The data come from the RNA Mapping Database (RMDB), library OK3TST. This 207-nucleotide RNA was probed chemically with 2A3.
RNA sequence: GGGAACGACUCGAGUAGAGUCGAAAAGCAGUCAUCGCUAAAGAUAGAUUUGACGCAAUACAAAACUCUAGUACUCGAUCUUUGCUUUCAUCGACGAUCGUGGACGAAAGCAAAGAUCGUGUAUUAUAUUGCACAUUAUUUCAUCAUCUUUACGACACAUUAAGCCUCCGUUCGCGGAGGCUUAAUGAAAAGAAACAACAACAACAAC
Reactivity to 2A3 in 0.01 (KOAc 150mM, MgCl2 10mM, bicine 150mM(pH8.5), 24C), signal-to-noise 4, nucleotides 027 to 156: g100c060a030g110u110c060a050u050c030g080c100u020a010a000a010g000a000u080a050g030a050u100u070u110g040a070c120g000c010a020a000u040a020c090a070a170a230a150c050u100c030u090a010g010u000a010c000u000c010g000a010u000c000u020u000u000g000c000u000u020u000c000a020u010c000g200a060c030g130a260u230c260g040u040g140g030a010c020g010a000a000a000g020c000a000a000a000g010a000u000c000g000u000g000u000a000u000u000a010u000a010u010u020g040c010a030c010a130u080u200a070u140u300u130c060a070u030c000a010u000c040u020u010u060a030c020g030a000c020a000